[RMDB]
RNA sequence: GGGAACGACUCGAGUAGAGUCGAAAACUUAGUGCUAUGGGGAUCCUCUGAGCCGGAGUAGGAUCCACUCGUACCACCGUCUAACUCGACAAUGACUAAGACUCCGGAUCCGCUCAGGGAUCCCCUGCAGGCAGUAACUUUUCGAAGUUACUGCCUGAAAAGAAACAACAACAACAAC
Reactivity to DMS in 0.01 (KOAc 150mM, MgCl2 10mM, bicine 150mM(pH8.5), 24C), signal-to-noise 2, nucleotides 027 to 126: c040u020u000a100g040u000g000c070u000a040u020g010g000g010g010a030u000c010c000u040c030u010g020a000g030c100c070g040g010a020g010u000a170g000g000a040u000c010c070a110c160u000c060g000u010a120c090c100a070c130c100g020u000c030u020a110a120c230u000c110g000a040c140a070a060u000g000a100c050u020a100a090g000a060c040u000c040c030g020g010a150u000c080c120g010c000u000c020a030g020g010g010a010u000c000c000c000c000u000g020